[RMDB]
RNA sequence: GGGAACGACUCGAGUAGAGUCGAAAACUCCUCUUCGGAGGAGAUUAAGAUAUGGACCAGUUGUCAGAUCCGCGUGUCGCUGACUCGGAAACGAGGUGGAGACACGAUGGAUCUUGGAUUUACUGGUCCUAAGUCGACACUCGUCCUUCGGGACGAAUGGAUCUCAAAUAUUCGUAUUUGAGAUCCAAAAAGAAACAACAACAACAAC
Reactivity to DMS in 0.01 (KOAc 150mM, MgCl2 10mM, bicine 150mM(pH8.5), 24C), signal-to-noise 2, nucleotides 027 to 156: c000u000c010c000u000c020u000u020c300g040g000a020g010g030a010g000a030u000u000a070a150g010a140u000a220u010g010g040a030c040c000a060g020u000u010g000u010c040a030g000a020u000c010c020g060c000g030u000g010u000c000g000c000u010g010a040c000u000c010g040g000a180a100a240c030g020a010g010g010u000g010g010a050g000a020c000a020c010g000a040u000g080g010a000u000c000u000u010g020g000a090u000u000u000a020c030u010g000g000u000c000c010u000a010a070g020u010c000g010a220c100a070c080u000c010g030u010c000c000u000u000c300g030g030g000a020c000g010a010a020
Reactivity to 2A3 in 0.01 (KOAc 150mM, MgCl2 10mM, bicine 150mM(pH8.5), 24C), signal-to-noise 3, nucleotides 027 to 156: c020u030c000c020u020c020u060u070c300g130g000a000g010g000a010g000a000u080u130a070a020g000a000u050a030u130g010g000a000c000c000a010g010u000u010g040u050c000a010g000a000u000c000c010g000c000g000u000g000u010c030g000c160u120g050a030c000u000c020g010g050a050a090a040c010g010a020g000g040u040g020g040a040g000a010c000a000c010g010a090u060g000g000a000u000c010u000u020g020g000a000u100u200u090a030c010u000g000g010u000c000c000u000a010a010g010u000c000g030a010c010a050c070u020c000g030u000c010c030u070u120c210g070g000g000a000c010g000a000a020
Notes:
An RNA of 207 nucleotides, treated with DMS and 2A3 and read out base by base. The RNA was probed in 150 mM KOAc, 10 mM MgCl2 and 150 mM bicine (pH 8.5) at 24 C. It was measured as part of the RMDB library RNAMAK.